[RMDB]
RNA sequence: GGGAACGACUCGAGUAGAGUCGAAAAGAUAUGGACCCUCGCCAGAACUACUCUUACUGGUCGGAAACGACCAAUAAGAGCUGGCACCAAGGGUCCUAAGUCAAACUGUCAUGGUUCGCCAUGACAGCCAUAUCGGGAACUUCGGUUCCCGAUAUGGAAAAGAAACAACAACAACAAC
Reactivity to DMS in 0.01 (KOAc 150mM, MgCl2 10mM, bicine 150mM(pH8.5), 24C), signal-to-noise 3, nucleotides 027 to 126: g000a030u000a300u010g000g000a020c010c010c010u010c300g020c010c010a010g000a060a030c040u010a300c020u000c000u000u000a000c040u010g010g010u010c010g000g000a050a170a220c000g010a010c000c000a000a000u000a000a000g000a030g000c000u000g000g020c020a110c180c300a140a060g000g020g020u010c010c010u000a000a100g000u000c030a120a120a300c000u010g000u010c010a000u000g020g000u000u010c300g000c000c000a000u010g000a010c000a000g000
Reactivity to 2A3 in 0.01 (KOAc 150mM, MgCl2 10mM, bicine 150mM(pH8.5), 24C), signal-to-noise 3, nucleotides 027 to 126: g010a030u080a050u110g000g000a020c010c010c010u020c180g000c000c010a020g030a120a090c160u280a060c000u300c000u020u010a020c010u020g000g010u000c000g000g000a020a090a030c010g000a000c000c000a010a010u010a000a010g020a000g000c010u000g000g050c000a020c030c060a110a120g010g000g000u000c000c000u010a040a000g030u000c030a100a070a140c000u020g000u000c000a010u010g000g000u060u090c220g060c100c000a000u000g000a000c010a000g020